[RMDB]
RNA sequence: GGGAACGACUCGAGUAGAGUCGAAAAAAGAUAGUGUAACAUACAAUACCAUCCAUGUGAAUUGUUACUGGUAUCUGUCCGAAUAAUGGUGUCUACAGUGAGCAAACUACUCGAACGGGCUGUUAAAGUGUACCAUGGGAUUCGUCCCAUGGUACACAAAAGAAACAACAACAACAAC
Reactivity to DMS in 0.01 (KOAc 150mM, MgCl2 10mM, bicine 150mM(pH8.5), 24C), signal-to-noise 2, nucleotides 027 to 126: a060a010g020a060u010a020g040u000g010u000a000a010c020a040u070a150c130a050a060u030a110c080c000a080u000c100c090a110u040g010u000g010a110a110u000u020g020u000u000a030c000u010g020g040u020a010u000c040u000g000u000c030c030g000a080a060u060a020a010u010g010g010u000g050u000c020u000a100c080a080g010u030g000a090g040c100a060a060a170c060u000a030c020u020c030g020a040a070c070g020g000g000c010u010g020u000u010a040a080a080
Reactivity to 2A3 in 0.01 (KOAc 150mM, MgCl2 10mM, bicine 150mM(pH8.5), 24C), signal-to-noise 3, nucleotides 027 to 126: a000a030g170a020u170a010g270u190g000u050a020a030c010a010u130a010c080a080a080u100a170c070c020a090u090c040c060a000u110g020u050g120a150a120u090u080g000u010u040a020c020u100g030g040u030a040u030c020u050g120u000c000c000g020a050a030u140a060a210u140g090g000u000g030u050c030u040a070c030a080g020u020g170a090g000c030a000a000a220c020u000a010c000u010c010g010a040a020c010g030g040g000c020u010g020u050u140a070a160a000